RNA sequence: GGGAACGACUCGAGUAGAGUCGAAAAUGCCAGUGCUUCCAGAGAAAGAGCCCCCUGCCAGUAGCAUGGUCGUAUCUUGAGAGCUGCCAUAACAAAAAAAUAAGCACUAAGGUGAAGUGGCACAGCAAUUAUGGAUGGAUUUCGAUCCAUCCAUAAUAAAAGAAACAACAACAACAAC
Reactivity to 2A3 in 0.01 (KOAc 150mM, MgCl2 10mM, bicine 150mM(pH8.5), 24C), signal-to-noise 1, nucleotides 027 to 126: u110g020c050c000a010g010u040g060c010u050u010c020c010a020g040a000g050a160a200a020g080a160g130c000c000c040c000c000u000g000c000c000a020g000u040a000g040c060a020u080g020g000u040c020g020u090a070u100c050u080u130g060a130g000a020g080c000u010g020c000c000a070u060a120a060c130a050a110a030a020a000a000a020u110a040a000g000c020a000c060u030a050a060g000g000u030g010a020a000g030u040g040g000c000a030c010a040g030c010a000
Reactivity to DMS in 0.01 (KOAc 150mM, MgCl2 10mM, bicine 150mM(pH8.5), 24C), signal-to-noise 5, nucleotides 027 to 126: u010g020c040c020a060g010u000g000c020u000u010c050c050a090g010a130g010a060a100a120g010a140g010c030c030c010c030c020u000g000c020c040a050g000u010a090g010c060a070u000g010g020u000c080g000u000a070u000c050u000u000g010a150g000a140g020c060u000g000c030c020a030u000a060a120c070a010a000a010a090a050a060a090u010a040a090g010c030a020c030u000a090a070g010g010u010g010a060a140g010u000g000g020c020a050c090a080g020c100a070
About this RNA:
The record gives the reactivity of an RNA of 177 nucleotides to 2A3 and DMS. The 2A3 profile rests on 1,300 reads. 2A3 is a SHAPE reagent: it acylates the 2'-hydroxyl of flexible nucleotides of all four kinds. For DMS the reverse transcriptase was MarathonRT. The data come from the RNA Mapping Database (RMDB), library OK2TST. The DMS profile rests on 4,865 reads.